RNA sequence: GGGAACGACUCGAGUAGAGUCGAAAAAAUUUGAGCGUCGCACACACACAGACUAAGUCUGCUGCUGACAGAGCCUAAACCGCUCUGACAGUGUGCGAGAUAUCGUUCUUAAUGUGAGCAGAAGAAAUAUAGUCUCACUAUUCGUAGUGAGACUAUAAAAAGAAACAACAACAACAAC
Reactivity to DMS in 0.01 (KOAc 150mM, MgCl2 10mM, bicine 150mM(pH8.5), 24C), signal-to-noise 6, nucleotides 027 to 126: a040a070u010u000u000g000a060g010c080g010u000c020g010c010a020c000a060c080a260c130a140c070a020g000a030c020u010a140a160g020u010c000u000g000c090u000g020c140u000g010a140c000a000g000a020g000c010c010u000a070a070a100c300c300g000c000u000c000u000g000a070c010a060g000u000g020u000g010c000g010a020g010a090u000a110u010c040g010u000u000c000u000u000a060a080u000g010u010g010a070g010c050a080g010a050a060g000a050a080a080
Reactivity to 2A3 in 0.01 (KOAc 150mM, MgCl2 10mM, bicine 150mM(pH8.5), 24C), signal-to-noise 5, nucleotides 027 to 126: a000a030u120u070u070g030a030g000c020g050u000c010g030c000a000c000a000c000a010c000a010c000a030g020a020c030u160a250a060g020u000c000u010g070c040u030g010c030u010g030a020c000a000g000a000g000c000c000u030a050a040a030c010c020g000c000u000c000u000g010a010c010a030g000u000g010u020g050c010g010a010g000a000u130a020u090c020g020u060u020c020u060u090a180a130u150g040u060g090a040g050c070a030g040a170a010g070a030a160a000

Chemical mapping of a 177-nucleotide RNA with DMS and 2A3. 2A3 is a SHAPE reagent: it acylates the 2'-hydroxyl of flexible nucleotides of all four kinds. For DMS the reverse transcriptase was MarathonRT. The data come from the RNA Mapping Database (RMDB), library M2PK90. The DMS profile rests on 6,981 reads. The reactions ran in a buffer of 150 mM KOAc, 10 mM MgCl2 and 150 mM bicine (pH 8.5), at 24 C.